[RMDB]
Background: This 170-nucleotide RNA was probed chemically with DMS and 2A3. The RNA was probed in 150 mM KOAc, 10 mM MgCl2 and 150 mM bicine (pH 8.5) at 24 C.
RNA sequence: GGGAACGACUCGAGUAGAGUCGAAAAGCCACCAUCAAAGAAAUUGUUGGUGAGCGCCAACUAUUACUUGUGUGGGAGGCUGGCAAGUCCAAACCACCACUCAAUCGUAAUUAUGUUUUUACUGGUUUAAGUAUCAACUUCGGUUGAUACAAAAGAAACAACAACAACAAC
Reactivity to DMS in 0.01 (KOAc 150mM, MgCl2 10mM, bicine 150mM(pH8.5), 24C), signal-to-noise 7, nucleotides 027 to 129: g000c020c010a040c040c000a040u050c040a030a050a200g050a120a200a080u000u000g010u010u020g060g000u000g040a120g000c130g000c000c020a040a030c130u020a020u000u000a060c030u000u000g050u060g050u000g010g020g010a140g040g040c160u050g010g020c080a190a100g030u030c010c050a010a030a040c040c020a240c030c030a040c000u020c000a010a020u060c200g020u030a050a060u020u060a060u000g050u010u040u040u040u030a050c080u000g040g020u070u000u030a070a160
Reactivity to 2A3 in 0.01 (KOAc 150mM, MgCl2 10mM, bicine 150mM(pH8.5), 24C), signal-to-noise 9, nucleotides 027 to 129: g000c000c000a000c000c000a010u000c040a020a080a090g240a110a210a160u090u040g000u000u000g000g010u010g030a080g000c020g040c020c010a030a010c020u030a010u020u010a000c020u020u010g010u010g000u020g060g060g040a280g020g000c010u000g000g000c110a220a040g050u020c000c000a030a040a020c020c000a020c000c000a000c000u020c010a010a050u100c090g020u020a010a010u060u070a110u100g180u030u030u020u080u070a170c120u060g100g050u090u050u080a100a030